[RMDB]
RNA sequence: GGGAACGACUCGAGUAGAGUCGAAAACUCUCCUGGAGAGGUCUUCUGCCCUAGCCCGGUCUUCGAAGCUUCCUUUGGCUACUACCCGGUGGAAACAACUGAAGCUUCAACGCCUUUUUUUCCUAUCUUCUUUAGCACCGGGCUAGGGAGUAAGCCCGUUAUUGAUCCUCUUCGGAGGAUCAAUAACAAAAGAAACAACAACAACAAC
Reactivity to 2A3 in 0.01 (KOAc 150mM, MgCl2 10mM, bicine 150mM(pH8.5), 24C), signal-to-noise 1, nucleotides 027 to 156: c010u040c000u040c050c180u240g020g090a130g010a050g010g090u070c010u090u050c010u030g270c000c000c000u000a000g000c010c000c010g020g000u070c090u200u170c250g000a000a010g050c000u010u000c000c000u010u010u010g030g020c000u060a010c020u100a110c040c040c000g070g030u010g010g000a230a240a030c000a010a000c000u000g000a000a000g000c000u030u000c010a040a050c070g070c000c040u020u120u030u040u040u180u300c050c030u150a290u180c120u300u180c070u140u260u260a050g070c120a000c000c040g000g000g000c000u000a000g000g000g000a000g000u000a000a000g000c020c030c000
The record gives the reactivity of an RNA of 207 nucleotides to 2A3. 2A3 adducts were read by reverse transcription with SuperScript II with manganese. Source: RMDB library VIROID, as collected in RNAgym.